Chemical mapping of a 177-nucleotide RNA with DMS and 2A3.
High DMS reactivity at an A or C suggests that its Watson-Crick edge is free.
Values cover nucleotides 27 to 126.
For DMS, 1,253 sequencing reads were counted.
The RNA was probed in 150 mM KOAc, 10 mM MgCl2 and 150 mM bicine (pH 8.5) at 24 C.
RNA sequence: GGGAACGACUCGAGUAGAGUCGAAAAUUUGGACAAGUCUCUUCCUCAGUAACUUACACAACACAAGGCUUGUACGUGUAAAGCAUCAAUUUUAAUAAAAAGGCCAUUUUCCUGUUUACAAAUGGCACAAGUGUAGGUACUUCGGUACCUACACUUGAAAAGAAACAACAACAACAAC
Reactivity to DMS in 0.01 (KOAc 150mM, MgCl2 10mM, bicine 150mM(pH8.5), 24C), signal-to-noise 2, nucleotides 027 to 126: u000u010u010g000g010a070c010a030a030g000u000c000u010c230u000u010c000c040u000c190a090g030u000a070a100c170u000u000a040c030a030c000a190a080c090a100c120a110a080g000g000c030u000u010g000u020a050c100g000u000g000u000a020a090a090g010c140a100u010c060a030a070u010u000u020u010a060a110u040a030a020a050a040a260g020g010c060c020a010u000u000u000u000c120c050u010g000u020u010u000a140c190a040a000a020u000g010g010c000a180
Reactivity to 2A3 in 0.01 (KOAc 150mM, MgCl2 10mM, bicine 150mM(pH8.5), 24C), signal-to-noise 1, nucleotides 027 to 126: u050u030u090g030g000a020c000a040a040g080u040c010u000c000u120u070c030c000u040c010a040g060u020a070a010c000u020u030a020c040a030c000a050a060c040a030c020a180a000g080g000c010u020u000g030u040a020c070g030u000g000u030a100a150a010g010c030a030u110c030a080a140u000u110u130u200a300a170u200a130a160a000a010a000g140g040c000c030a010u000u010u010u010c030c010u110g080u090u100u030a040c090a060a030a000u030g000g030c020a010